An RNA of 207 nucleotides, treated with 2A3 and DMS and read out base by base. Reactivities are given for positions 27 through 156. For 2A3 the reverse transcriptase was SuperScript II with manganese. The DMS profile rests on 2,354 reads. The data come from the RNA Mapping Database (RMDB), library M2RFPK.
[RMDB]
RNA sequence: GGGAACGACUCGAGUAGAGUCGAAAAGAGUUCGGUUGGAGCGACAAGUAUUUAGCUUGAGAUAGCUAAAUCACCUCGGUAUGAUUAGGGUGAGACCUAGGAACCGUAGGGGUAUGCUCAAAGGAAGGUUACCGAACAACCUUCGGGUUGUUCGGAAUCAGAUCAUACACUUCGGUGUAUGAUCUGAAAAAGAAACAACAACAACAAC
Reactivity to 2A3 in 0.01 (KOAc 150mM, MgCl2 10mM, bicine 150mM(pH8.5), 24C), signal-to-noise 3, nucleotides 027 to 156: g050a010g030u110u140c120g050g040u060u110g060g000a010g010c040g150a160c050a060a000g040u070a070u000u000u000a000g000c000u010u020g030a040g000a090u110a030g000c010u000a000a000a000u010c010a020c000c000u030c010g020g000u300a270u160g020a030u010u010a010g000g000g050u090g110a070g040a050c000c010u010a000g000g000a010a000c000c010g010u030a030g020g000g000g000u020a040u170g010c010u000c000a090a030a000g060g020a060a010g040g010u080u100a060c000c000g000a000a000c000a000a000c000c020u030u030c170g050g000g010u000u000g010u000u010c010g000g000a000a010
Reactivity to DMS in 0.01 (KOAc 150mM, MgCl2 10mM, bicine 150mM(pH8.5), 24C), signal-to-noise 1, nucleotides 027 to 156: g000a200g000u020u000c010g060g000u020u000g000g000a030g030c030g010a040c020a000a070g040u010a030u000u000u000a000g000c010u000u000g010a300g020a150u000a010g000c000u000a000a020a000u000c010a030c000c010u010c040g000g030u000a050u010g000a170u020u000a030g020g020g010u010g020a300g000a150c020c010u000a030g030g000a190a060c030c010g030u000a070g030g000g010g020u000a040u020g030c030u020c000a040a040a080g030g000a020a080g000g010u000u000a220c010c020g000a060a010c000a020a000c000c000u010u000c300g060g020g000u000u000g000u000u000c000g010g020a020a030